Chemical mapping of a 177-nucleotide RNA with DMS and 2A3. The RNA was probed in 150 mM KOAc, 10 mM MgCl2 and 150 mM bicine (pH 8.5) at 24 C. Source: RMDB library OK2TRN, as collected in RNAgym. For 2A3 the reverse transcriptase was SuperScript II with manganese.
RNA sequence: GGGAACGACUCGAGUAGAGUCGAAAAUAGUCCUGGUUCCACACCGCAGGUGGCCCUGUGACUAGGAGCAGCCACCUUGCAUCCCAGUUGCCCCAGCAGGAGAAUGAGAUGAAUAAGACUUGCCUGCAUCGCUAUUUCCUUUCGAGGAAAUAGCGAUAAAAGAAACAACAACAACAAC
Reactivity to DMS in 0.01 (KOAc 150mM, MgCl2 10mM, bicine 150mM(pH8.5), 24C), signal-to-noise 3, nucleotides 027 to 126: u020a140g000u000c040c010u010g030g010u000u000c000c020a070c130a080c170c100g000c050a030g010g020u010g000g000c210c070c020u000g010u010g020a150c190u010a070g010g000a110g010c130a170g020c000c000a010c010c010u000u000g020c020a190u010c020c010c000a100g010u000u000g000c030c000c020c060a110g000c010a010g000g010a060g000a070a130u010g000a080g010a150u010g010a080a090u000a130a100g000a060c060u000u000g000c010c000u000g010c070
Reactivity to 2A3 in 0.01 (KOAc 150mM, MgCl2 10mM, bicine 150mM(pH8.5), 24C), signal-to-noise 1, nucleotides 027 to 126: u110a000g030u000c020c010u010g070g000u120u000c030c000a020c010a020c080c090g000c010a010g000g050u010g010g010c050c020c020u040g020u050g120a090c100u070a030g070g000a040g000c070a020g010c010c000a000c000c000u000u150g040c020a050u020c010c020c010a060g030u090u120g090c020c020c010c000a000g000c000a000g010g000a010g070a060a110u220g010a080g020a110u140g010a030a140u160a110a060g030a030c040u010u040g040c000c000u000g000c050